RNA sequence: GGGAACGACUCGAGUAGAGUCGAAAAGCUGUCGAGGUUUCACAUCCCGUAUGUAGCCGGUAACAGUGGCAUCGAACAUAAUGCAAUCCAUCAAUGCACAGUGUGGAUUGGUGGAGGAUGGGGGAGCAGAAAGUUUUGGGUUCGCCCAAAACUUUCUAAAAGAAACAACAACAACAAC
Reactivity to 2A3 in 0.01 (KOAc 150mM, MgCl2 10mM, bicine 150mM(pH8.5), 24C), signal-to-noise 1, nucleotides 027 to 126: g000c040u040g130u060c020g000a000g030g200u060u110u170c020a080c030a060u040c000c000c120g060u150a000u180g000u020a000g080c000c000g080g000u000a050a120c000a050g100u050g070g030c000a140u050c050g000a040a020c130a080u060a070a040u300g000c120a050a010u000c000c000a000u030c050a000a030u050g060c000a000c070a070g050u000g120u000g300g010a030u000u000g050g000u000g000g000a000g150g000a050u070g070g060g000g000g000a110g000c020
Chemical mapping of a 177-nucleotide RNA with 2A3. Values cover nucleotides 27 to 126. For 2A3, 307 sequencing reads were counted. Source: RMDB library OK1LIB, as collected in RNAgym.